[RMDB]
RNA sequence: GGGAACGACUCGAGUAGAGUCGAAAAGGUGGCGUCGCCGCUUGUGCUGCACGCGACGUCGCUGUUGCAGACGCAGAUGCGUGUGAGCAACACUGUGCUGAGGUCGUUGCACGCGGGUGGGUCGGCGUGCUCCCUGCACGUUCGCGUGCAGGGAGCAAAAAGAAACAACAACAACAAC
Reactivity to 2A3 in 0.01 (KOAc 150mM, MgCl2 10mM, bicine 150mM(pH8.5), 24C), signal-to-noise 5, nucleotides 027 to 126: g100g010u120g050g020c020g000u020c010g000c020c020g000c030u050u040g040u090g030c160u010g020c020a050c110g060c000g000a010c010g220u010c020g000c020u030g010u010u040g000c020a020g010a080c010g000c030a070g090a300u300g060c040g030u130g040u120g100a150g010c000a000a040c030a010c130u180g020u080g180c100u140g020a060g040g050u050c020g000u010u010g000c010a010c020g010c020g010g000g040u110g030g050g020u120c030g010g000c000g010
Reactivity to DMS in 0.01 (KOAc 150mM, MgCl2 10mM, bicine 150mM(pH8.5), 24C), signal-to-noise 2, nucleotides 027 to 126: g000g010u020g040g020c020g020u000c050g030c020c030g020c000u020u010g030u030g010c200u010g020c000a040c140g040c030g010a010c020g000u010c020g000c010u010g020u000u000g050c000a210g000a080c000g000c010a170g030a140u030g020c000g000u010g000u020g050a110g090c000a030a030c010a070c230u050g000u070g020c050u020g030a030g010g050u000c040g000u000u000g010c020a010c000g010c020g010g020g000u000g010g000g040u050c010g010g010c020g020

An RNA of 177 nucleotides, treated with 2A3 and DMS and read out base by base. For DMS, 4,034 sequencing reads were counted.